[RMDB]
Conditions: 150 mM KOAc, 10 mM MgCl2 and 150 mM bicine (pH 8.5), 24 C. The record gives the reactivity of an RNA of 177 nucleotides to 2A3 and DMS.
RNA sequence: GGGAACGACUCGAGUAGAGUCGAAAAGAAAGCGCGAGACCAAGAUGCUGAAAAAGAGCAUCGGUCGAGGCAGCGAAGCUGUCGAGCCUAAAGUCGUUAGAGGCCGGAAUAGCGACGAGCGCGAAAAGGGAAUAACCUUCUUCGGAAGGUUAUUCCCAAAAGAAACAACAACAACAAC
Reactivity to 2A3 in 0.01 (KOAc 150mM, MgCl2 10mM, bicine 150mM(pH8.5), 24C), signal-to-noise 1, nucleotides 027 to 126: g070a000a060a000g000c010g000c000g010a050g030a040c010c010a010a070g000a000u000g020c000u060g070a020a140a000a170a070g220a000g000c000a000u000c000g000g020u000c000g000a000g030g000c000a000g000c010g090a090a000g030c000u020g020u010c000g050a050g000c010c010u090a110a020a000g000u000c020g000u020u020a060g000a020g130g030c060c020g060g010a080a050u000a000g010c000g000a000c030g000a000g010c000g000c000g000a000a000a000a110
Reactivity to DMS in 0.01 (KOAc 150mM, MgCl2 10mM, bicine 150mM(pH8.5), 24C), signal-to-noise 2, nucleotides 027 to 126: g000a040a080a210g000c000g010c020g040a170g030a030c000c030a070a140g020a000u000g000c000u020g010a070a090a070a070a160g000a040g030c000a000u000c000g050g000u000c000g000a080g000g020c000a010g000c010g000a130a150g020c040u000g000u000c000g000a070g000c010c020u000a120a180a300g000u020c020g000u010u050a030g020a140g020g030c000c000g000g000a080a140u000a000g010c000g000a040c000g000a060g020c010g000c010g030a060a050a170a130
Description:
High DMS reactivity at an A or C suggests that its Watson-Crick edge is free. Values cover nucleotides 27 to 126.